[RMDB]
RNA sequence: GGGAACGACUCGAGUAGAGUCGAAAAAUCAGGGCGCGAGGCGGCAAUUCGAGCCUCAUUCACAUCGACUGGAUGAUUGGUUCGGGUGAAAUCGACGUGGAUGGCAUCAAUGCGGAUGGAAGCCGCACCCACUACUCAUGUUCGCAUGAGUAGUGGGAAAAGAAACAACAACAACAAC
Reactivity to DMS in 0.01 (KOAc 150mM, MgCl2 10mM, bicine 150mM(pH8.5), 24C), signal-to-noise 3, nucleotides 027 to 126: a090u020c070a080g010g000g020c070g010c060g010a110g000g010c050g010g020c060a090a070u000u000c030g010a040g000c010c000u000c010a020u000u000c010a030c110a160u010c160g000a080c200u000g010g000a020u000g010a090u010u010g010g020u030u000c030g000g010g010u000g000a040a080a140u000c050g010a080c070g010u000g020g010a080u000g000g000c040a100u010c080a080a160u000g000c040g010g010a090u000g000g010a100a120g020c000c000g000c040a150
Reactivity to 2A3 in 0.01 (KOAc 150mM, MgCl2 10mM, bicine 150mM(pH8.5), 24C), signal-to-noise 2, nucleotides 027 to 126: a000u070c030a030g020g020g050c010g000c010g020a020g040g000c030g010g000c020a000a040u020u020c020g010a000g010c020c000u000c000a000u000u010c020a010c030a150u190c080g220a140c100u040g030g000a010u040g020a100u060u200g040g000u040u000c020g010g030g000u040g060a110a030a000u080c050g060a060c040g030u020g060g050a070u050g030g030c020a050u060c020a050a130u110g010c000g030g000a030u090g050g030a090a000g030c010c000g000c000a010